[RMDB]
RNA sequence: GGGAACGACUCGAGUAGAGUCGAAAACACGGACCAUUGGACUGUGCCAUAAAAACCUUAUGCCUGUUUUUAUUUUGAGAUGUAGUCUUGCUGCGUUGCGCCGGCUGGUCUCAAACUCCUGGGCUCAGUGAACAUCUCAAUUCGUUGAGAUGUUCACAAAAGAAACAACAACAACAAC
Reactivity to 2A3 in 0.01 (KOAc 150mM, MgCl2 10mM, bicine 150mM(pH8.5), 24C), signal-to-noise 2, nucleotides 027 to 126: c020a000c020g030g000a020c030c000a210u180u300g040g040a030c000u020g000u040g010c000c030a030u100a010a080a000a020a020c050c010u160u170a080u150g030c010c010u030g040u000u000u070u000u070a070u020u080u010u040g030a060g010a010u060g060u300a050g000u000c030u050u160g040c070u060g010c020g230u190u090g020c050g030c020c020g030g010c000u020g000g000u000c000u000c000a000a010a010c030u030c020c030u090g060g010g020c030u000c050a020
Reactivity to DMS in 0.01 (KOAc 150mM, MgCl2 10mM, bicine 150mM(pH8.5), 24C), signal-to-noise 2, nucleotides 027 to 126: c010a050c040g020g020a130c030c030a200u010u020g050g010a090c030u000g010u000g000c040c060a060u000a010a020a050a050a040c020c090u010u010a070u000g000c020c010u020g000u000u000u000u000u010a040u000u010u000u000g000a050g000a020u000g010u010a030g010u000c010u000u010g020c070u010g070c050g020u010u010g010c050g030c030c290g020g000c020u000g000g010u000c000u000c030a020a030a040c230u010c030c040u000g000g020g010c030u000c250a080